The record gives the reactivity of an RNA of 177 nucleotides to DMS and 2A3. For 2A3, 1,672 sequencing reads were counted. Conditions: 150 mM KOAc, 10 mM MgCl2 and 150 mM bicine (pH 8.5), 24 C. The DMS profile rests on 1,326 reads.
[RMDB]
RNA sequence: GGGAACGACUCGAGUAGAGUCGAAAAGAUAUGGAUGUACAAGGACAUAUUCAGCGAAGAACUCGGAAACGAGGGAGCUGAUAUGGUCGGGGUACAUCCUAAGUCAAAACCUUAGUUCGCUAAGGAACUUUGAAGAGUGGUUCGCCACUCUUCAAAGAAAAGAAACAACAACAACAAC
Reactivity to DMS in 0.01 (KOAc 150mM, MgCl2 10mM, bicine 150mM(pH8.5), 24C), signal-to-noise 2, nucleotides 027 to 126: g000a050u000a300u010g000g000a010u020g000u000a010c010a070a160g000g020a020c000a010u000a020u030u000c010a010g010c010g000a070a240g000a150a210c000u000c000g010g010a100a120a230c010g010a020g000g000g000a090g010c000u000g020a000u000a000u000g000g020u000c010g020g010g020g000u000a000c010a010u000c000c010u000a010a030g000u030c030a080a040a100a110c000c000u000u000a010g010u000u010c250g000c010u000a010a020g010g000a030a130
Reactivity to 2A3 in 0.01 (KOAc 150mM, MgCl2 10mM, bicine 150mM(pH8.5), 24C), signal-to-noise 1, nucleotides 027 to 126: g010a000u060a070u110g000g000a000u010g020u010a030c010a060a050g180g010a010c010a000u050a000u190u230c000a090g000c010g210a300a020g020a100a080c020u000c000g050g060a150a050a040c000g010a010g030g020g040a020g000c010u030g020a010u000a000u040g100g070u020c010g030g040g000g030u000a000c000a030u010c000c000u000a040a010g030u030c040a010a060a080a210c000c000u000u010a030g010u030u060c270g000c120u000a000a040g000g030a060a100